[RMDB]
Chemical mapping of a 207-nucleotide RNA with 2A3 and DMS. Reactivities are given for positions 27 through 156.
RNA sequence: GGGAACGACUCGAGUAGAGUCGAAAACAGAGCUAAUGAGCCACAUACCUACCCAAGGUGAAAGCUCCUUAUCUCGCAAUGUGUAACUCAUGAUUCUCAUGACCCCUGGUUGGAGAGAUCCGGACUAUAGACUAGAGGGUGUUCGCACCCUCUAGAACAAUGAGCUGGAGUUCGCUCCAGCUCAUUGAAAAGAAACAACAACAACAAC
Reactivity to 2A3 in 0.01 (KOAc 150mM, MgCl2 10mM, bicine 150mM(pH8.5), 24C), signal-to-noise 1, nucleotides 027 to 156: c060a020g020a000g000c000u030a040a000u030g000a010g020c060c030a070c040a060u260a030c000c000u080a100c020c020c050a050a020g010g000u020g030a130a050a050g000c000u010c000c020u070u010a040u020c040u030c040g000c080a050a100u100g080u030g030u100a070a070c020u000c040a020u020g050a100u250u090c100u020c060a020u070g050a060c000c000c010c020u040g000g000u010u040g000g010a070g000a000g000a060u010c030c030g000g010a010c020u070a020u120a300g030a070c000u000a020g000a020g000g000g020u010g030u000u050c090g070c060a000c000c000c000u000c000u000a000g000a010a000
Reactivity to DMS in 0.01 (KOAc 150mM, MgCl2 10mM, bicine 150mM(pH8.5), 24C), signal-to-noise 1, nucleotides 027 to 156: c060a130g030a090g060c080u030a070a050u000g000a050g040c050c010a080c150a260u000a030c010c000u000a090c090c110c120a110a130g040g000u000g020a200a170a070g000c020u000c030c040u000u010a010u010c010u020c010g040c110a080a120u000g020u000g000u000a080a090c070u000c060a050u000g020a130u000u000c090u010c020a050u000g000a100c020c040c010c040u000g000g020u000u000g000g030a120g010a100g000a140u000c020c060g030g020a080c040u000a160u010a150g010a100c010u020a020g000a010g030g000g060u000g030u000u000c230g040c030a030c000c000c000u030c000u010a010g000a070a230

Conditions: 150 mM KOAc, 10 mM MgCl2 and 150 mM bicine (pH 8.5), 24 C.
The 2A3 profile rests on 761 reads.
2A3 is a SHAPE reagent: it acylates the 2'-hydroxyl of flexible nucleotides of all four kinds.
For DMS the reverse transcriptase was MarathonRT.